[RMDB]
RNA sequence: GGGAACGACUCGAGUAGAGUCGAAAACUGUACUCCAUUUCGAUGGAGUACAGGAUGGUACCUUUGUGUUGUCAGCUGUGUCCCAGCCCAUUGGGCUGAGGACCAGCUUGGAUUUACACUCUGGUGGUUCGCUAGUUAGAUUUCGAUCUAACUAGAAUAUAUAGCUGCGAUUCGUCGCAGCUAUAUAAAAAGAAACAACAACAACAAC
Reactivity to DMS in 0.01 (KOAc 150mM, MgCl2 10mM, bicine 150mM(pH8.5), 24C), signal-to-noise 2, nucleotides 027 to 156: c000u000g010u000a020c010u000c000c010a010u000u000u010c300g010a030u000g010g000a020g020u000a000c000a010g000g000a100u000g030g000u000a120c010c010u010u000u000g020u000g030u000u000g000u000c000a050g000c000u000g020u030g010u000c010c000c000a040g000c010c010c020a300u000u010g070g010g030c000u010g010a060g030g000a010c010c010a000g000c000u000u000g010g000a080u000u010u000a000c020a030c020u000c060u010g020g030u010g000g010u000u000c060g030c010u000a010g000u010u000a010g000a030u000u000u010c260g010a030u010c000u000a000a010c000u000a010g000a100a200
Reactivity to 2A3 in 0.01 (KOAc 150mM, MgCl2 10mM, bicine 150mM(pH8.5), 24C), signal-to-noise 2, nucleotides 027 to 156: c000u010g000u000a000c000u000c010c010a040u200u080u180c300g130a040u040g000g000a020g050u000a000c000a010g000g040a020u100g040g110u120a030c000c000u000u000u040g010u000g000u010u010g040u070c000a020g000c000u000g030u020g000u300c000c000c000a000g000c040c010c070a300u200u300g000g030g000c020u030g060a180g020g020a000c000c000a000g050c000u000u070g010g000a020u070u180u200a000c020a010c000u000c040u040g050g020u020g020g060u240u080c070g000c070u000a000g000u000u020a000g030a030u100u120u030c280g090a000u050c000u000a000a000c000u000a000g000a000a000